RNA sequence: GGGAACGACUCGAGUAGAGUCGAAAAGAUAAGUGCUGUGUUAGUUUCUAUGGUAACUUAAUGGAGUGUAACACCUUGAAAAUAUUAGAGCUAAGGACUUAUUUGUCUGUUUGACCUUAUUCAUUUAAACUUUCUGCAAACUAAUGUGGUCACACUAUCAUUAGUAGUCGUUCGCGACUACUAAUGAAAAAGAAACAACAACAACAAC
Reactivity to 2A3 in 0.01 (KOAc 150mM, MgCl2 10mM, bicine 150mM(pH8.5), 24C), signal-to-noise 7, nucleotides 027 to 156: g060a020u110a060a040g030u040g050c030u020g020u030g020u060u040a050g000u040u090u010c050u070a070u060g040g020u060a070a040c010u020u070a050a040u160g070g000a060g030u060g020u050a080a030c020a040c060c000u040u080g090a070a060a050a040u140a120u110u130a040g020a010g030c050u030a030a060g030g010a020c020u050u120a080u150u140u110g050u000c030u020g080u050u050u050g030a030c010c010u020u060a070u110u080c050a040u050u050u150a080a090a070c030u050u160u090c070u120g060c060a020a090a070c050u080a010a080u070g020u030g040g010u050c020a010c000a000c070u070a030
Reactivity to DMS in 0.01 (KOAc 150mM, MgCl2 10mM, bicine 150mM(pH8.5), 24C), signal-to-noise 4, nucleotides 027 to 156: g000a170u000a080a120g020u000g040c010u000g040u000g020u000u000a090g010u010u000u000c020u000a120u010g020g020u000a060a070c060u000u000a070a070u000g010g020a090g000u000g000u010a070a090c040a040c030c040u000u010g000a080a070a070a130u000a070u010u000a070g010a070g030c020u020a060a120g010g000a050c040u000u000a110u000u000u010g010u000c040u000g010u000u000u000g010a050c040c030u000u000a080u000u000c060a100u000u000u000a060a090a130c050u000u010u000c070u010g020c060a080a050a100c070u000a040a060u000g000u000g020g020u000c040a050c050a060c060u000a160

The record gives the reactivity of an RNA of 207 nucleotides to 2A3 and DMS. Values cover nucleotides 27 to 156. The DMS profile rests on 10,295 reads.